[RMDB]
RNA sequence: GGGAACGACUCGAGUAGAGUCGAAAAGGGUCACUUCGGUGAGAGCGUGCGCAAUUUUACCAUAGGCCGAUUGGUGCAUGGUCACGUUUGGGAUGGUAGUGAGAGGAUGGAGGGCACCUGGAUGACGCCUCGCGUCUAGUUUCGACUAGACGCGAGGAAAAGAAACAACAACAACAAC
Reactivity to DMS in 0.01 (KOAc 150mM, MgCl2 10mM, bicine 150mM(pH8.5), 24C), signal-to-noise 1, nucleotides 027 to 126: g010g000g020u010c020a020c020u010u000c120g000g000u000g010a080g020a060g000c060g030u000g020c190g020c230a070a100u000u000u000u010a090c030c040a060u010a090g000g000c010c020g010a150u000u000g000g000u000g000c090a080u000g010g000u010c050a000c030g000u000u000u000g000g000g010a110u010g020g000u000a180g000u000g010a130g010a070g000g000a090u000g000g000a080g000g020g010c070a050c080c020u000g000g020a080u000g000a100c230g000
Reactivity to 2A3 in 0.01 (KOAc 150mM, MgCl2 10mM, bicine 150mM(pH8.5), 24C), signal-to-noise 2, nucleotides 027 to 126: g050g000g050u020c000a010c050u020u090c090g050g020u050g010a060g010a020g000c030g000u010g020c080g040c070a110a080u080u120u120u080a080c020c000a040u060a150g110g000c040c060g180a270u030u270g010g000u040g140c060a030u040g050g000u000c010a010c060g040u030u050u060g040g000g100a150u090g030g050u030a090g030u030g110a070g020a060g060g010a060u040g050g040a110g050g030g010c030a000c000c020u060g110g000a110u110g030a020c080g000